Background
Conditions: 150 mM KOAc, 10 mM MgCl2 and 150 mM bicine (pH 8.5), 24 C. Chemical mapping of a 177-nucleotide RNA with DMS. For DMS, 836 sequencing reads were counted.
[RMDB]
RNA sequence: GGGAACGACUCGAGUAGAGUCGAAAAAGCACUAGGCUGUUGUCUAGACUAAGCAAGCUCUGGAAAGCAAUGCUGAGUCUCUGAGAAGAGGGAGCAUGGGGUGUGCUGAUUUAAAAACAGAAAAUGCCAGCAGAAUAAUCUUCGGAUUAUUCUGCUGAAAAGAAACAACAACAACAAC
Reactivity to DMS in 0.01 (KOAc 150mM, MgCl2 10mM, bicine 150mM(pH8.5), 24C), signal-to-noise 1, nucleotides 027 to 126: a050g000c070a050c040u000a050g020g010c040u010g020u010u010g010u010c010u010a010g010a090c080u010a090a050g000c010a070a250g000c100u000c070u000g020g010a120a130a090g000c060a080a140u010g000c030u000g000a100g010u010c000u010c050u010g010a150g000a140a020g000a100g010g030g030a060g000c020a020u000g000g030g000g030u000g010u000g040c000u000g000a100u000u010u010a050a030a090a080a050c080a040g020a070a050a140a090u000g010c160